Overview
This 177-nucleotide RNA was probed chemically with 2A3 and DMS. The 2A3 profile rests on 5,443 reads. 2A3 adducts were read by reverse transcription with SuperScript II with manganese. The reactions ran in a buffer of 150 mM KOAc, 10 mM MgCl2 and 150 mM bicine (pH 8.5), at 24 C. Source: RMDB library OK2TST, as collected in RNAgym. The DMS profile rests on 3,994 reads. Reactivities are rounded to 0.1 and cut off at 0 and 3.

RNA sequence: GGGAACGACUCGAGUAGAGUCGAAAAACGUUGAAAGAGAAUCGGUAGGGGUGCAGCGAGGGAGGCUGCGAUGGAGGUGAGAGUCGAGUAUGAGGACUUGCCUGCGAUCUUGUCUAUUCCUGAGGCGCCUUACCGUUGAUUUCGAUCAACGGUAAGGAAAAGAAACAACAACAACAAC
Reactivity to 2A3 in 0.01 (KOAc 150mM, MgCl2 10mM, bicine 150mM(pH8.5), 24C), signal-to-noise 4, nucleotides 027 to 126: a000c030g020u020u020g070a090a050a040g070a020g010a050a040u040c040g040g010u040a040g040g040g000g030u070g020c030a040g040c030g060a050g010g050g000a020g060g000c020u010g010c030g050a070u060g050g040a020g030g020u060g040a090g010a000g030u020c030g010a030g100u160a110u210g100a080g070g060a040c000u000u030g020c010c020u040g000c030g060a040u020c030u050u040g020u020c010u040a120u040u060c010c010u040g030a040g070g030c050g050
Reactivity to DMS in 0.01 (KOAc 150mM, MgCl2 10mM, bicine 150mM(pH8.5), 24C), signal-to-noise 3, nucleotides 027 to 126: a080c070g000u000u000g010a050a080a200g000a070g010a060a070u000c040g010g010u010a050g000g000g000g020u010g030c040a070g020c120g010a170g010g010g020a050g000g000c030u000g010c130g000a060u010g000g010a050g000g010u020g000a090g010a130g010u010c020g010a140g000u010a120u010g010a100g010g000a070c030u000u010g010c030c000u000g000c030g000a070u000c040u000u020g010u000c020u000a170u010u000c010c000u000g010a170g000g000c080g000